Structure probing data (2A3 and DMS) for a 177-nucleotide construct. DMS adducts were read by reverse transcription with MarathonRT. For 2A3, 5,079 sequencing reads were counted. The reactions ran in a buffer of 150 mM KOAc, 10 mM MgCl2 and 150 mM bicine (pH 8.5), at 24 C. Reactivities are rounded to 0.1 and cut off at 0 and 3. It was measured as part of the RMDB library M2PK50. High 2A3 reactivity points to a flexible backbone, as in loops and unpaired stretches. For DMS, 3,578 sequencing reads were counted.

[RMDB]
RNA sequence: GGGAACGACUCGAGUAGAGUCGAAAACCUCCUACCUUCGGGUAGGAGGAAAGCACGCGCAACGUAAGCGACAAGCAUGUCAACGCGAACGAACGUAAAUAAAAACGCAGGGCUUCGGCCCUGCGAACUUGCCAUAUAUGUUCGCAUAUAUGGCAAGAAAAGAAACAACAACAACAAC
Reactivity to 2A3 in 0.01 (KOAc 150mM, MgCl2 10mM, bicine 150mM(pH8.5), 24C), signal-to-noise 3, nucleotides 027 to 126: c010c000u010c010c000u010a000c000c000u030u060c210g160g000g000u000a000g010g000a000g000g000a020a010a010g030c020a020c070g050c010g000c030a050a110c070g050u100a100a010g010c020g060a090c050a070a030g150c060a080u110g030u100c030a070a070c060g020c010g050a090a030c050g030a050a000c030g070u110a000a150a110u130a050a130a120a010a000c010g010c010a000g000g030g000c000u050u120c240g100g000c000c000c000u000g000c000g000a000a000
Reactivity to DMS in 0.01 (KOAc 150mM, MgCl2 10mM, bicine 150mM(pH8.5), 24C), signal-to-noise 4, nucleotides 027 to 126: c010c000u000c000c000u000a000c000c000u000u020c160g020g000g010u010a000g000g000a010g000g010a010a020a070g010c140a080c060g010c050g020c090a120a070c060g000u010a060a210g020c040g010a070c110a080a140g030c120a070u000g000u000c020a070a100c030g000c020g000a090a050c060g010a120a050c070g010u000a070a070a090u010a080a070a110a080a140c020g000c010a010g000g000g000c010u000u010c180g020g000c010c000c010u000g010c000g010a000a020